Overview
Chemical mapping of a 177-nucleotide RNA with DMS and 2A3. DMS adducts were read by reverse transcription with MarathonRT. For 2A3, 3,071 sequencing reads were counted. The DMS profile rests on 2,124 reads. In probing experiments dimethyl sulfate is read out at A N1 and C N3, which are open when not base-paired. For 2A3 the reverse transcriptase was SuperScript II with manganese.

[RMDB]
RNA sequence: GGGAACGACUCGAGUAGAGUCGAAAAGAUAUGGAAGACGAAGGCUUUUGACGGCUAUACAUUCGGAAACGAAUGAUAGGCCGAUAAGCCUCGUCUUCCUAAGUCAAAAGCCUUGUUCGCAAGGCAACUAAGGCAUAGCGUUCGCGCUAUGCCUUAGAAAAGAAACAACAACAACAAC
Reactivity to DMS in 0.01 (KOAc 150mM, MgCl2 10mM, bicine 150mM(pH8.5), 24C), signal-to-noise 2, nucleotides 027 to 126: g020a090u010a300u000g000g010a050a010g020a040c000g000a060a070g010g000c010u020u000u010u000g030a280c200g020g020c000u000a090u000a100c000a020u010u010c010g010g000a090a060a120c000g030a050a000u000g000a050u010a070g050g010c000c020g010a090u000a010a020g000c000c010u000c000g000u000c000u000u000c000c000u000a000a090g000u020c030a100a030a080a160g020c000c000u000u000g000u000u020c230g060c030a000a020g000g030c030a080a040
Reactivity to 2A3 in 0.01 (KOAc 150mM, MgCl2 10mM, bicine 150mM(pH8.5), 24C), signal-to-noise 2, nucleotides 027 to 126: g000a000u050a000u090g000g010a030a000g020a000c010g090a230a110g050g000c060u160u040u220u270g300a210c110g000g000c000u040a000u060a220c010a010u000u010c030g050g090a070a030a020c040g010a010a010u030g020a030u020a030g300g000c000c000g020a020u010a030a000g010c000c000u000c000g000u000c000u000u000c000c000u000a010a000g000u020c000a000a110a070a010g010c000c000u000u000g010u020u100c190g000c210a030a040g020g000c020a010a000